[RMDB]
Chemical mapping of a 207-nucleotide RNA with 2A3 and DMS. 2A3 adducts were read by reverse transcription with SuperScript II with manganese.
RNA sequence: GGGAACGACUCGAGUAGAGUCGAAAACACGCGCGUGUAGACUGCCCUACAUACCGACCACCACUGAGGGAUAGGAGCCCACGAUGACCGAGACCGCCACCUGGACCAAGGACGAGGCCAAGGCCGCCGACGCCAAGCUCGCCGAGCUGACCGAGGCGGCUGCCUCACAUUUCGAUGUGAGGCAGCCAAAAGAAACAACAACAACAAC
Reactivity to 2A3 in 0.01 (KOAc 150mM, MgCl2 10mM, bicine 150mM(pH8.5), 24C), signal-to-noise 1, nucleotides 027 to 156: c070a020c060g050c010g030c030g030u070g010u010a060g060a090c060u100g040c000c000c000u040a050c050a090u140a070c040c100g060a010c010c050a030c000c000a070c080u060g010a080g020g010g000a030u050a010g070g010a010g010c010c040c000a010c030g060a110u060g030a000c040c010g010a000g030a060c000c060g040c000c040a070c000c010u070g000g000a070c050c000a060a050g040g000a030c020g050a140g000g000c000c060a060a070g030g030c000c030g000c010c010g030a040c000g010c050c000a050a040g010c010u020c010g240c020c060g040a020g000c020u040g030a090c010c010g030a050g030g020c010
Reactivity to DMS in 0.01 (KOAc 150mM, MgCl2 10mM, bicine 150mM(pH8.5), 24C), signal-to-noise 1, nucleotides 027 to 156: c020a030c030g030c010g070c080g050u010g010u000a040g030a160c040u000g090c080c030c030u010a030c060a130u010a060c030c050g050a060c060c030a100c020c020a070c040u000g030a090g010g000g000a170u000a090g000g000a130g020c040c000c020a110c050g010a140u000g000a050c030c010g000a220g020a100c010c010g030c010c060a060c020c000u060g000g010a010c050c030a020a040g010g030a100c070g030a240g000g060c010c020a080a240g010g020c000c050g000c080c000g030a300c150g020c000c000a090a060g050c020u000c020g000c140c050g030a120g010c010u000g000a030c010c000g010a300g050g000c050